[RMDB]
Chemical mapping of a 207-nucleotide RNA with 2A3. For 2A3, 686 sequencing reads were counted. 2A3 adducts were read by reverse transcription with SuperScript II with manganese. It was measured as part of the RMDB library OK3TST.
RNA sequence: GGGAACGACUCGAGUAGAGUCGAAAACUGAUCCAGGUGAGCAGCUGCAGAACUGAGCCGGAAAAGCCUGUGGGAGGUGCUAUGAAGGGCUUAAAGGGCAAUAGCAGAACCUGCCUGUUCAGCUGUUACGUGGGAAGGGGCCAGGAAGGUGGUGGAACAGUGGUAGUGAUUUCGAUCACUACCACUGAAAAGAAACAACAACAACAAC
Reactivity to 2A3 in 0.01 (KOAc 150mM, MgCl2 10mM, bicine 150mM(pH8.5), 24C), signal-to-noise 1, nucleotides 027 to 156: c030u020g000a020u000c060c020a020g060g050u110g050a010g020c020a010g010c040u160g000c030a000g020a090a050c000u070g000a000g030c000c000g000g090a080a110a020a000g070c010c030u120g030u160g060g070g010a110g020g090u070g050c020u020a060u220g100a190a000g030g020g000c030u060u050a110a020a060g080g000g000c040a130a090u080a100g050c040a030g030a010a030c010c010u020g060c000c000u000g010u000u050c010a020g030c000u020g030u090u070a090c070g060u040g000g000g070a000a070g050g000g020g000c030c030a020g030g000a020a070g010g040u070g010g030u000g000g000a110a000